[RMDB]
RNA sequence: GGGAACGACUCGAGUAGAGUCGAAAAGUGCUGGCGGGGCCAUGUGGCGAGUCAUGUGACCUGGGGCUGUUUUCUGCUGGGGUCCUUACCCAUCUGUUCUCUCGGCUCUUUCUGGGUUAUCAGGCGCCAGUCCAAGUCCUCCCAGGCAGCCAGCUUCACUAUGUUCAUGGUUCGCCAUGAACAUAGUAAAAGAAACAACAACAACAAC
Reactivity to 2A3 in 0.01 (KOAc 150mM, MgCl2 10mM, bicine 150mM(pH8.5), 24C), signal-to-noise 1, nucleotides 027 to 156: g130u060g000c000u000g010g000c030g050g030g060g060c030c040a180u160g020u100g070g000c060g000a000g000u040c090a130u060g060u050g070a050c010c010u000g010g020g000g000c010u020g070u060u090u090u060c060u060g020c000u010g000g000g000g020u060c000c030u030u100a050c020c000c000a010u020c060u100g110u270u030c060u020c000u010c070g030g000c030u000c100u060u220u040c060u110g060g000g000u030u040a100u200c050a020g040g000c020g010c040c000a010g000u030c000c010a080a030g010u010c000c000u000c010c040c000a000g000g000c000a010g000c020c000a020g000c040u020u060c020
The record gives the reactivity of an RNA of 207 nucleotides to 2A3.
Values cover nucleotides 27 to 156.
The RNA was probed in 150 mM KOAc, 10 mM MgCl2 and 150 mM bicine (pH 8.5) at 24 C.
For 2A3 the reverse transcriptase was SuperScript II with manganese.